Chemical mapping of a 177-nucleotide RNA with DMS. The DMS profile rests on 920 reads. The reactions ran in a buffer of 150 mM KOAc, 10 mM MgCl2 and 150 mM bicine (pH 8.5), at 24 C. It was measured as part of the RMDB library TTRINS.

RNA sequence: GGGAACGACUCGAGUAGAGUCGAAAAGAUAUGGAGCACUCUCGGGAGUUAGCCUGAACUGCUACUGUUCGGAAACGAACAAGUAGCAGUUCAGGCUAACAUCGAUCGAGCCCGUGCUCCUAAGUCACGAUACCGACAUGUUCGCAUGUCGGUAUCGAAAAGAAACAACAACAACAAC
Reactivity to DMS in 0.01 (KOAc 150mM, MgCl2 10mM, bicine 150mM(pH8.5), 24C), signal-to-noise 1, nucleotides 027 to 126: g000a060u000a300u000g010g010a030g020c000a030c030u010c010u000c020g050g010g000a030g040u000u020a010g070c000c010u000g030a000a000c000u000g020c010u010a000c010u000g030u020u000c000g070g000a080a140a240c030g050a080a000c030a050a120g030u010a030g000c010a050g000u000u000c000a000g010g000c000u000a000a000c000a060u000c120g000a050u000c000g000a020g050c300c080c300g050u000g010c020u010c020c000u010a010a080g010u000c080a230